RNA sequence: GGGAACGACUCGAGUAGAGUCGAAAAAUGGGAUUGAUAGAAGGGUUGGCCAGGUCGGCCAGUUUAGCAAUGCUGCAGCGAACGUCUGUCAAUAAAGUGCCGGAUCCGUACAAGACUCUUCAGACUCCAUUCUAUUGCUAUUCGUAGCAAUAGAAUGAAAAGAAACAACAACAACAAC
Reactivity to DMS in 0.01 (KOAc 150mM, MgCl2 10mM, bicine 150mM(pH8.5), 24C), signal-to-noise 9, nucleotides 027 to 126: a060u020g010g010g000a100u010u010g020a120u030a080g010a040a030g010g000g020u010u000g000g020c170c120a110g010g010u020c090g000g000c010c040a050g020u020u010u010a070g000c110a060a080u030g010c090u010g010c020a050g000c040g000a100a090c150g000u020c010u000g000u020c080a050a070u020a040a070a080g010u010g010c000c020g000g010a040u020c020c040g010u040a060c100a110a120g000a040c020u000c010u000u000c020a100g000a130c080u010c080
Reactivity to 2A3 in 0.01 (KOAc 150mM, MgCl2 10mM, bicine 150mM(pH8.5), 24C), signal-to-noise 9, nucleotides 027 to 126: a010u130g020g020g050a050u100u100g070a080u110a150g020a030a030g060g020g010u030u020g040g010c060c050a060g020g080u070c020g010g000c020c010a010g020u040u040u060a030g000c060a080a110u180g030c040u050g000c040a020g020c030g090a100a080c070g060u090c030u040g050u050c010a010a020u120a120a090a020g080u120g040c010c000g030g030a060u060c010c010g010u020a050c020a050a040g010a030c000u010c000u030u020c020a010g030a040c020u000c010